[RMDB]
RNA sequence: GGGAACGACUCGAGUAGAGUCGAAAAUGAGUCCGCGCGUGAAUGUAUUGAAGAAAACCGGAUUCUCAAACGCAUUGCCCGCCAUUGUAUUGAGCAAACCGAUGGCCUGUUUAUCACCUUGCCGGAACCUAGUAUCCUUCUUCGGAAGGAUACUAGGAAAAGAAACAACAACAACAAC
Reactivity to DMS in 0.01 (KOAc 150mM, MgCl2 10mM, bicine 150mM(pH8.5), 24C), signal-to-noise 3, nucleotides 027 to 126: u020g000a100g010u000c010c040g000c130g030c110g000u000g000a130a100u010g010u010a140u000u010g010a080a100g010a040a080a120a080c050c030g000g000a180u000u000c000u010c040a030a050a060c100g000c030a040u010u000g010c020c060c070g020c070c070a040u000u020g000u000a120u010u000g010a060g010c100a020a040a090c120c040g000a040u010g000g010c160c060u000g010u000u000u000a060u010c060a070c040c060u000u000g020c050c030g010g010a090a180
Reactivity to 2A3 in 0.01 (KOAc 150mM, MgCl2 10mM, bicine 150mM(pH8.5), 24C), signal-to-noise 2, nucleotides 027 to 126: u070g020a000g050u010c000c000g030c020g000c020g070u110g070a110a030u080g050u190a130u140u180g130a160a100g020a050a040a000a010c030c040g030g000a030u110u000c020u020c020a080a080a080c100g040c090a060u050u080g050c030c040c050g040c010c010a030u010u080g060u070a060u070u150g060a050g010c070a000a000a070c020c000g020a030u030g060g000c010c030u030g030u080u090u020a100u100c030a020c060c010u030u120g030c040c000g020g000a020a030